[RMDB]
RNA sequence: GGGAACGACUCGAGUAGAGUCGAAAAGGACUGACGCCUGCCCGGUGCUGGAAGGUUAAGAGGACCGGUUAGCCAGUAAUGGCGAAGCUGAGAAUUUAAGCCCCAGUAAACGGCGGUGGUAACUAUAUCUAACACAAGGUUUCGACCUUGUGUUAGAAAAAGAAACAACAACAACAAC
Reactivity to DMS in 0.01 (KOAc 150mM, MgCl2 10mM, bicine 150mM(pH8.5), 24C), signal-to-noise 6, nucleotides 027 to 126: g010g000a130c050u020g020a150c060g030c000c010u020g050c040c020c000g020g000u030g020c000u010g040g000a110a090g030g040u000u000a080a090g010a010g020g000a300c050c020g010g000u010u000a300g010c000c000a020g000u080a100a110u010g000g000c000g000a130a220g000c000u000g010a020g000a300a100u010u020u010a110a170g000c000c010c000c000a020g000u020a020a100a120c090g000g000c030g000g000u000g000g010u000a070a090c090u030a060u010a120
Reactivity to 2A3 in 0.01 (KOAc 150mM, MgCl2 10mM, bicine 150mM(pH8.5), 24C), signal-to-noise 6, nucleotides 027 to 126: g050g040a040c070u070g010a010c030g020c000c010u110g000c020c010c010g250g020u010g000c010u000g000g060a240a130g060g010u060u040a120a040g030a020g050g020a010c000c020g010g030u270u010a000g000c010c010a040g030u130a130a130u050g000g000c000g000a000a000g000c000u000g000a000g000a090a000u010u020u030a080a040g010c000c000c000c000a010g000u030a030a200a000c000g000g010c010g000g010u000g010g040u030a020a010c010u040a020u040a030
The record gives the reactivity of an RNA of 177 nucleotides to DMS and 2A3. The RNA was probed in 150 mM KOAc, 10 mM MgCl2 and 150 mM bicine (pH 8.5) at 24 C.